[RMDB]
RNA sequence: GGGAACGACUCGAGUAGAGUCGAAAAGGGGGGUGGCUAGGAACAAAGGGACCGGGGGGUCCGUGGGAUGCUUUUCCCGAUUCCGCCCAACCAACCCCCCAAGAGGUCCCCCAGGAAUGGCGGGACCGAAACCCGAUAAGUUCGCUUAUCGGGUUUCAAAAGAAACAACAACAACAAC
Reactivity to DMS in 0.01 (KOAc 150mM, MgCl2 10mM, bicine 150mM(pH8.5), 24C), signal-to-noise 1, nucleotides 027 to 126: g020g020g000g020g040g030u000g000g040c020u000a070g000g010a110a070c090a060a130a150g010g000g000a010c010c030g020g010g030g010g020g000u000c030c020g050u030g020g010g000a020u000g000c070u000u000u010u020c010c000c000g020a060u000u010c000c010g000c030c010c030a040a050c020c000a050a110c000c000c000c000c000c010a030a030g000a150g020g000u000c000c000c010c000c010a020g020g000a200a160u000g000g010c110g020g000g010a010c010c000
Structure probing data (DMS) for a 177-nucleotide construct. The DMS profile rests on 934 reads. It was measured as part of the RMDB library VIROID.